[RMDB]
RNA sequence: GGGAACGACUCGAGUAGAGUCGAAAAUUCGCCGACCCUUAGCGUGGGCAACAUCGACGGCAGCAUCAGCGCGCUCUGCCUGUUCUUCGAUGGCCUGGUAGGCGCGCGCCUGAUCGUGCGCGAGACAUCGGUAUGAUCAUUUCGAUGAUCAUACCGAAAAAGAAACAACAACAACAAC
Reactivity to 2A3 in 0.01 (KOAc 150mM, MgCl2 10mM, bicine 150mM(pH8.5), 24C), signal-to-noise 4, nucleotides 027 to 126: u040u010c040g030c050c010g130a120c020c010c020u060u160a050g040c030g130u070g000g040g010c010a030a040c030a100u070c040g170a210c030g090g020c030a010g040c010a030u030c010a000g000c000g000c000g000c030u030c020u020g030c000c000u010g030u070u010c020u110u130c100g270a270u220g040g000c000c020u010g000g010u000a020g010g000c000g000c040g000c000g000c080c030u040g020a030u030c060g040u040g020c040g000c020g030a020g050a030c030a090
Reactivity to DMS in 0.01 (KOAc 150mM, MgCl2 10mM, bicine 150mM(pH8.5), 24C), signal-to-noise 5, nucleotides 027 to 126: u000u000c100g040c000c020g010a110c020c010c090u010u010a110g010c160g010u010g000g000g020c080a070a080c140a080u000c030g020a090c110g010g010c020a100g020c120a030u000c040a060g000c020g010c020g000c020u000c020u000g020c020c010u000g000u000u000c020u000u000c230g000a080u020g010g010c050c020u000g000g020u000a020g010g010c130g010c000g010c010g000c080c040u010g010a040u000c120g010u000g010c020g000c010g010a260g000a100c170a080